[RMDB]
RNA sequence: GGGAACGACUCGAGUAGAGUCGAAAAGAUAUGGAUACUCAGAGGAACUACGAUUCCCGCUCGGAAACGAGCGAACAUCGCCGACGAAGAGUAUCCUAAGUCAAACAGGAGAGUUCGCUCUCCUGAACCAACAGGUAACGUUCGCGUUACCUGUUGGAAAAGAAACAACAACAACAAC
Reactivity to DMS in 0.01 (KOAc 150mM, MgCl2 10mM, bicine 150mM(pH8.5), 24C), signal-to-noise 2, nucleotides 027 to 126: g000a050u000a240u000g000g000a000u000a000c000u000c000a060g000a300g000g000a150a080c050u010a130c000g020a060u000u000c190c120c010g040c020u000c000g020g010a020a020a070c010g000a000g000c000g020a020a070c180a030u000c030g000c120c060g000a090c040g000a300a190g000a010g000u000a010u000c000c000u000a010a080g030u000c010a070a120a250c010a000g000g000a020g020a010g030u000u000c260g010c010u000c000u000c010c000u000g000a010a100
Reactivity to 2A3 in 0.01 (KOAc 150mM, MgCl2 10mM, bicine 150mM(pH8.5), 24C), signal-to-noise 2, nucleotides 027 to 126: g000a010u060a030u100g000g010a000u000a010c000u000c000a000g000a060g130g030a210a120c140u200a120c300g010a020u070u090c020c040c020g000c000u020c000g000g000a070a030a030c000g000a000g000c000g000a000a000c040a030u000c000g040c130c190g140a300c010g030a090a020g020a000g000u010a000u000c000c000u010a010a010g030u000c050a090a090a100c000a000g040g000a010g020a000g010u100u170c240g060c150u000c000u000c010c000u000g010a010a030
The record gives the reactivity of an RNA of 177 nucleotides to DMS and 2A3. The data come from the RNA Mapping Database (RMDB), library TTRDEL. The 2A3 profile rests on 3,189 reads. For DMS the reverse transcriptase was MarathonRT.